[RMDB]
RNA sequence: GGGAACGACUCGAGUAGAGUCGAAAACUGCAGCAUUUAGAACUAACCAGAAUGAAGAAGGAUAAUCCCAGCGUAAGCUUCACCAAGGAAGAAGUUCUUGUGAAAAGACUUGAGAAGUCAUUCCUGAAGAAAUUUAACAAGGAAGCAAUGAAGUUUGAAACAUCUCCCAAUUCGUUGGGAGAUGUUUAAAAGAAACAACAACAACAAC
Reactivity to DMS in 0.01 (KOAc 150mM, MgCl2 10mM, bicine 150mM(pH8.5), 24C), signal-to-noise 2, nucleotides 027 to 156: c040u000g040c060a090g020c050a080u010u000u000a050g010a140a160c080u010a060a140c060c020a190g000a090a110u010g030a110a060g040a090a090g000g010a120u010a090a100u000c010c010c010a130g020c070g020u010a080a100g010c000u010u000c030a090c020c050a110a090g010g020a030a110g010a070a090g020u000u000c040u000u000g000u000g000a080a080a110a140g000a060c030u000u010g020a090g000a030a060g000u000c030a110u000u000c030c020u010g000a060a150g000a100a140a180u000u010u000a010a080c040a040a020g010g010a060a020g000c050a030a120u000g020a030a180g000u000u010u000g020
Reactivity to 2A3 in 0.01 (KOAc 150mM, MgCl2 10mM, bicine 150mM(pH8.5), 24C), signal-to-noise 1, nucleotides 027 to 156: c100u100g040c010a000g000c000a110u000u000u140a070g000a050a020c040u040a010a010c070c010a000g020a090a040u150g000a120a120g040a060a030g040g050a000u070a110a110u190c000c000c000a000g000c020g010u000a080a020g020c000u040u040c040a020c040c010a070a000g000g010a010a080g040a040a010g070u000u030c000u030u030g010u000g070a070a070a050a040g010a010c000u050u060g040a040g010a120a000g030u000c010a010u060u000c000c000u000g000a050a010g020a050a150a020u080u200u070a000a020c000a010a010g000g000a070a000g000c010a000a040u070g020a020a020g040u070u040u160g160
The data come from the RNA Mapping Database (RMDB), library OK3TST. Structure probing data (DMS and 2A3) for a 207-nucleotide construct. For DMS, 2,241 sequencing reads were counted. For 2A3 the reverse transcriptase was SuperScript II with manganese. Conditions: 150 mM KOAc, 10 mM MgCl2 and 150 mM bicine (pH 8.5), 24 C.